The record gives the reactivity of an RNA of 177 nucleotides to DMS and 2A3. For 2A3 the reverse transcriptase was SuperScript II with manganese. The data come from the RNA Mapping Database (RMDB), libraries RFM100 and RFMREP. The reactions ran in a buffer of 150 mM KOAc, 10 mM MgCl2 and 150 mM bicine (pH 8.5), at 24 C.
RNA sequence: GGGAACGACUCGAGUAGAGUCGAAAAAUUUAUCUGCCGAGUUUGCCUUUCGGCAAACGUCGCAUUAUUAUAUGUGCUUUUUCACUUCGUUGCAAAAGCACGGAAAAAACUUUUUUCGGAAGCUGAGUAACACUUCAGGAUUCGUCCUGAAGUGUUAAAAAGAAACAACAACAACAAC
Reactivity to DMS in 0.01 (KOAc 150mM, MgCl2 10mM, bicine 150mM(pH8.5), 24C), signal-to-noise 4, nucleotides 027 to 126: a040u050u000u010a070u030c120u000g000c080c040g010a170g010u000u000u000g000c000c000u010u030u040c230g010g000c000a000a010a010c000g010u000c080g020c020a060u040u010a060u050u040a110u010a090u040g010u000g010c000u000u000u010u010u010c000a020c020u030u040c240g020u040u010g000c060a000a000a000a000g020c000a020c010g020g010a000a060a070a070a090a070c050u000u000u000u010u000u010c060g010g000a080a080g020c080u020g000a100g010
Reactivity to 2A3 in 0.01 (KOAc 150mM, MgCl2 10mM, bicine 150mM(pH8.5), 24C), signal-to-noise 4, nucleotides 027 to 126: a000u120u120u030a100u020c070u060g070c120c050g000a020g000u000u000u000g030c010c020u240u300u250c190g010g000c000a000a000a000c020g130u030c020g000c020a020u050u100a070u140u060a130u150a090u250g010u010g000c000u000u000u030u040u040c000a010c030u170u230c260g270u300u000g000c020a000a020a000a030g000c000a020c000g000g000a070a070a000a000a010a040c100u220u130u020u020u040u050c040g050g030a060a010g050c080u080g010a020g080